[RMDB]
The record gives the reactivity of an RNA of 207 nucleotides to DMS and 2A3. For 2A3, 1,790 sequencing reads were counted. The data come from the RNA Mapping Database (RMDB), library OK3TST. For 2A3 the reverse transcriptase was SuperScript II with manganese.
RNA sequence: GGGAACGACUCGAGUAGAGUCGAAAAUGAUUACGGAUAUGAACAAGAUAUCAAGAUUUGUUCUAGUGGAAGUUGCUCCUCCAAUUCCAGUCACCAAGAAACCAGAGUAAACGACACUGACUAUGAUUGAUAAGCAGACUACUUCUCUGGUUCUUGAUACUGGAGUUUUAUUCGUAAAACUCCAGUAAAAAGAAACAACAACAACAAC
Reactivity to DMS in 0.01 (KOAc 150mM, MgCl2 10mM, bicine 150mM(pH8.5), 24C), signal-to-noise 3, nucleotides 027 to 156: u020g000a180u010u000a160c060g010g000a150u000a090u010g010a060a040c030a050a080g000a160u010a130u010c110a180a220g010a150u000u000u010g020u000u000c020u000a200g040u000g010g010a060a300g010u000u000g000c000u000c050c020u010c060c000a050a210u000u000c030c040a120g000u010c060a090c070c000a050a050g010a090a040a080c010c010a030g000a070g020u000a010a080a070c000g010a110c130a060c030u000g000a060c050u000a050u000g000a170u010u000g020a110u000a030a060g010c020a080g000a160c030u000a080c050u000u000c010u000c010u000g010g010u000u000c000u010u010g010a200
Reactivity to 2A3 in 0.01 (KOAc 150mM, MgCl2 10mM, bicine 150mM(pH8.5), 24C), signal-to-noise 4, nucleotides 027 to 156: u130g010a030u060u160a120c070g010g020a010u050a060u210g030a020a020c000a040a020g090a100u140a100u300c110a100a070g060a200u030u030u040g000u000u010c020u040a060g090u030g080g030a070a050g040u120u130g060c100u040c010c010u000c010c020a000a010u070u040c010c000a010g040u050c030a030c070c000a020a010g040a060a050a020c000c000a000g000a000g030u100a060a050a010c050g020a010c040a000c060u030g210a120c020u070a060u230g140a300u220u190g040a040u140a180a030g010c000a010g050a100c010u040a010c000u090u060c000u010c000u000g000g000u000u000c000u000u000g000a000